[RMDB]
RNA sequence: GGGAACGACUCGAGUAGAGUCGAAAACGGAUCGUUUGUGGUGUUACUCCGACAAGUUCAGCAGCUUCAGUAAUACGCCAGCGUCUAGUAAUCGUUCGAGCAGCCGGACUGUCAUUACCGAAUUGUGCCACUCGAACUAAUUCGUUAGUUCGAGUGGAAAAGAAACAACAACAACAAC
Reactivity to DMS in 0.01 (KOAc 150mM, MgCl2 10mM, bicine 150mM(pH8.5), 24C), signal-to-noise 2, nucleotides 027 to 126: c050g020g000a050u010c050g030u000u000u000g040u010g020g010u000g000u040u000a080c050u000c080c120g020a090c080a070a070g000u000u010c030a110g000c050a100g000c040u000u000c050a100g000u010a030a030u010a060c000g010c040c020a080g000c040g030u020c040u010a080g000u000a080a040u000c060g020u000u010c070g000a090g010c030a070g010c040c010g010g000a090c060u000g000u000c050a050u000u000a080c040c040g020a090a130u010u000g050u000g020
Reactivity to 2A3 in 0.01 (KOAc 150mM, MgCl2 10mM, bicine 150mM(pH8.5), 24C), signal-to-noise 2, nucleotides 027 to 126: c010g020g010a080u050c040g050u040u070u140g040u030g050g010u060g020u080u070a050c010u000c040c000g010a010c050a140a060g030u040u120c050a040g010c010a000g000c000u100u040c020a040g010u080a040a040u060a090c040g030c020c000a020g000c010g050u080c030u010a020g010u060a110a110u100c020g010u050u050c010g050a000g000c000a000g060c000c020g030g020a030c000u020g010u050c050a030u050u100a050c010c020g060a060a150u160u080g080u070g090
Source: RMDB library OK2TRN, as collected in RNAgym. Structure probing data (DMS and 2A3) for a 177-nucleotide construct. Values cover nucleotides 27 to 126. The RNA was probed in 150 mM KOAc, 10 mM MgCl2 and 150 mM bicine (pH 8.5) at 24 C. The 2A3 profile rests on 1,590 reads.